[RMDB]
RNA sequence: GGGAACGACUCGAGUAGAGUCGAAAAGGAGGGAAGGCUGGAGUUUCACCAGCGAAGGCUGCUCAGCCGAUUUCGCAUUUCAACGCUUUCACGGCGAGCAGUGAAAGCGAAAGCGAAGCCUCCGAAACAUAUAGCUCACGUUCGCGUGAGCUAUAUGAAAAGAAACAACAACAACAAC
Reactivity to DMS in 0.01 (KOAc 150mM, MgCl2 10mM, bicine 150mM(pH8.5), 24C), signal-to-noise 7, nucleotides 027 to 126: g010g010a010g000g000g000a110a110g000g010c000u000g000g010a080g010u010u010u010c100a200c190c010a020g010c020g010a150a090g010g010c010u010g010c110u020c070a030g000c000c010g000a300u030u010u000c030g010c010a140u020u030u020c180a110a190c080g010c000u000u000u000c010a010c000g000g000c230g000a060g000c060a080g020u000g000a010a010a000g000c000g000a040a050a080g000c010g000a030a040g000c000c000u000c000c000g010a070a070a160
Reactivity to 2A3 in 0.01 (KOAc 150mM, MgCl2 10mM, bicine 150mM(pH8.5), 24C), signal-to-noise 7, nucleotides 027 to 126: g010g000a010g010g020g050a110a080g110g000c000u020g090g040a100g040u070u140u120c130a120c040c010a020g020c030g020a030a010g100g010c010u040g020c040u070c110a000g000c000c020g000a000u010u000u000c010g000c060a130u030u140u140c070a100a050c030g000c010u010u010u010c020a010c020g060g020c110g080a070g040c060a030g000u010g000a000a000a000g000c000g010a020a000a000g000c000g000a010a010g040c000c000u000c000c000g000a010a010a000